[RMDB]
Conditions: 150 mM KOAc, 10 mM MgCl2 and 150 mM bicine (pH 8.5), 24 C.
This 207-nucleotide RNA was probed chemically with 2A3 and DMS.
Reactivities are given for positions 27 through 156.
The 2A3 profile rests on 787 reads.
It was measured as part of the RMDB library M2RFPK.
RNA sequence: GGGAACGACUCGAGUAGAGUCGAAAACCCUGUCAUGAGGCCGAAACGAAGGCACGUACCCCUUCGAAUGGCGUCGGGGAGUCAGCGGCUAUAUAUUCGCCUAAUGCUGGCAUCCGGGAACGAGCGUAUUAGACAGUAAUCUUCGGAUUACUGUCAACUUCAUCGGGAGAUUCGUCUCCCGAUGAAGAAAAGAAACAACAACAACAAC
Reactivity to 2A3 in 0.01 (KOAc 150mM, MgCl2 10mM, bicine 150mM(pH8.5), 24C), signal-to-noise 2, nucleotides 027 to 156: c000c000c050u040g200u070c170a210u100g070a060g120g030c080c070g070a130a040a050c000g000a020a020g010g070c120a040c020g170u180a150c010c000c010c030u020u030c030g110a130a120u280g010g020c000g010u010c010g000g020g000g050a070g000u020c000a000g000c010g030g020c050u020a020u010a030u050a050u250u100c000g000c000c000u090a190a100u250g000c010u000g000g000c020a250u040c000c000g040g010g030a170a040c040g030a010g010c060g010u060a140u110u080a040g010a010c010a000g000u000a010a000u030c000u000u060c190g050g000a000u000u000a000c000u000g000u020c000a020a000
Reactivity to DMS in 0.01 (KOAc 150mM, MgCl2 10mM, bicine 150mM(pH8.5), 24C), signal-to-noise 1, nucleotides 027 to 156: c050c000c080u000g000u000c160a100u010g020a120g070g060c040c030g070a160a050a170c020g000a050a020g030g010c010a110c190g000u000a180c020c050c000c020u010u000c050g010a100a150u000g040g030c040g000u010c020g010g010g000g000a210g040u000c060a030g020c010g000g010c030u000a170u010a200u030a230u010u000c180g000c000c030u010a050a070u000g060c010u030g000g010c000a080u000c060c000g000g000g000a080a130c000g000a110g020c030g010u010a120u020u010a250g000a030c010a010g050u000a010a010u000c000u000u000c300g060g000a020u010u000a000c020u090g000u000c010a000a020